[RMDB]
RNA sequence: GGGAACGACUCGAGUAGAGUCGAAAAAGUGGUGGUACGCCACCACAAGCCGAUGAUGAUGGUGGGCACUCGCCGAUUGGUGAGGUAAGGGGCGAGGAGACAGAGGAGCGCUAUUACGAUAGCGCAACUAACCUGAUGGGUUCGCCCAUCAGGUUAGAAAAGAAACAACAACAACAAC
Reactivity to DMS in 0.01 (KOAc 150mM, MgCl2 10mM, bicine 150mM(pH8.5), 24C), signal-to-noise 5, nucleotides 027 to 126: a150g020u010g010g020u000g000g000u020a090c290g040c020c000a010c010c000a010c000a050a090g020c060c030g020a130u040g000a110u010g000a080u010g000g020u010g000g000g000c050a150c020u000c030g000c000c010g020a180u020u040g010g010u010g000a030g010g030u010a060a130g000g000g010g000c060g020a060g000g000a140g000a060c120a060g000a110g000g020a140g000c000g000c000u000a000u000u010a120c160g020a080u000a000g010c000g000c000a030a050
Reactivity to 2A3 in 0.01 (KOAc 150mM, MgCl2 10mM, bicine 150mM(pH8.5), 24C), signal-to-noise 7, nucleotides 027 to 126: a010g030u020g000g010u010g010g000u040a030c220g050c020c000a000c000c000a000c000a010a010g030c010c040g090a130u110g020a020u040g030a030u100g030g040u050g040g020g000c030a040c040u020c020g020c000c020g080a140u060u300g030g010u070g020a050g020g020u080a070a080g010g000g010g000c060g010a050g020g020a030g020a020c060a030g080a060g090g050a070g010c000g000c000u000a010u040u050a080c180g050a020u010a000g000c000g000c000a000a010

Chemical mapping of a 177-nucleotide RNA with DMS and 2A3.
DMS adducts were read by reverse transcription with MarathonRT.
Reactivities are rounded to 0.1 and cut off at 0 and 3.
For 2A3 the reverse transcriptase was SuperScript II with manganese.
The RNA was probed in 150 mM KOAc, 10 mM MgCl2 and 150 mM bicine (pH 8.5) at 24 C.